[RMDB]
RNA sequence: GGGAACGACUCGAGUAGAGUCGAAAACGUCAACGUACGACAGCCCGUCUUGACGGACGCCUGGAGGAUUGACCAGAAGAGUUGCCACGUGGAGAACUUUACAAACGAUUUCGGCUGGUGAUGGGCGAAUAACGGACAGCUUCGGCUGUCCGUUAUUAAAAGAAACAACAACAACAAC
Reactivity to 2A3 in 0.01 (KOAc 150mM, MgCl2 10mM, bicine 150mM(pH8.5), 24C), signal-to-noise 1, nucleotides 027 to 126: c000g020u070c020a090a090c030g110u220a020c000g070a060c040a000g060c000c050c000g010u020c090u050u040g080a000c000g020g000a070c080g110c000c060u160g000g030a060g090g030a070u140u000g060a180c000c000a000g000a060a020g060a100g020u000u180g010c020c020a080c090g030u100g040g060a290g020a090a000c050u100u150u100a060c150a050a210a000c070g150a090u000u000u060c000g050g000c000u000g070g000u080g040a150u020g070g130g000c000g000
Reactivity to DMS in 0.01 (KOAc 150mM, MgCl2 10mM, bicine 150mM(pH8.5), 24C), signal-to-noise 1, nucleotides 027 to 126: c070g010u000c030a080a010c140g040u030a000c000g010a160c020a050g010c090c000c000g010u020c010u010u000g060a050c050g000g000a060c040g050c110c000u020g000g000a030g000g000a130u000u000g010a070c070c120a060g040a060a040g000a080g000u000u000g000c080c000a050c140g010u020g080g010a110g020a070a150c080u000u030u020a070c150a190a190a130c090g000a120u030u010u020c000g000g000c030u000g000g020u000g000a100u000g000g000g010c000g080
The data come from the RNA Mapping Database (RMDB), library OK1LIB. An RNA of 177 nucleotides, treated with 2A3 and DMS and read out base by base. For DMS the reverse transcriptase was MarathonRT. The RNA was probed in 150 mM KOAc, 10 mM MgCl2 and 150 mM bicine (pH 8.5) at 24 C. 2A3 adducts were read by reverse transcription with SuperScript II with manganese.